[RMDB]
RNA sequence: GGGAACGACUCGAGUAGAGUCGAAAACGCAAGUACAUCUGCUAGUGCUCCCAACGAAAGUUGAUAGCGAUGUGCACGUUUAGGAGAUAAAUAGCUAGUAUCUUUCUACUCGGAUUCCCCUCUGUCGCGAUAGGGCUCAAUUCGUUGAGCCCUAUCGAAAAGAAACAACAACAACAAC
Reactivity to 2A3 in 0.01 (KOAc 150mM, MgCl2 10mM, bicine 150mM(pH8.5), 24C), signal-to-noise 8, nucleotides 027 to 126: c010g000c060a090a020g010u010a000c000a010u010c060u240g030c000u020a020g030u030g150c050u040c030c040c000a020a010c040g120a040a040a020g000u010u010g060a110u040a010g010c010g000a010u010g000u000g010c020a050c130g000u010u040u030a080g030g030a040g010a010u060a050a200a040u180a040g100c120u070a010g030u030a090u020c000u010u120u000c000u000a000c000u000c000g010g020a040u000u010c000c010c030c000u050c030u060g030u030c050g000
Reactivity to DMS in 0.01 (KOAc 150mM, MgCl2 10mM, bicine 150mM(pH8.5), 24C), signal-to-noise 2, nucleotides 027 to 126: c010g020c160a040a080g000u000a000c010a020u000c000u030g030c000u000a040g010u000g000c030u000c080c170c010a000a000c050g000a110a120a100g010u000u000g040a110u000a000g000c010g000a030u000g000u000g010c000a120c000g000u000u000u000a200g000g000a040g000a040u000a000a030a050u040a160g040c120u040a090g040u000a000u000c010u000u000u010c000u000a000c000u000c000g010g000a130u000u000c000c000c000c120u010c060u010g010u000c150g000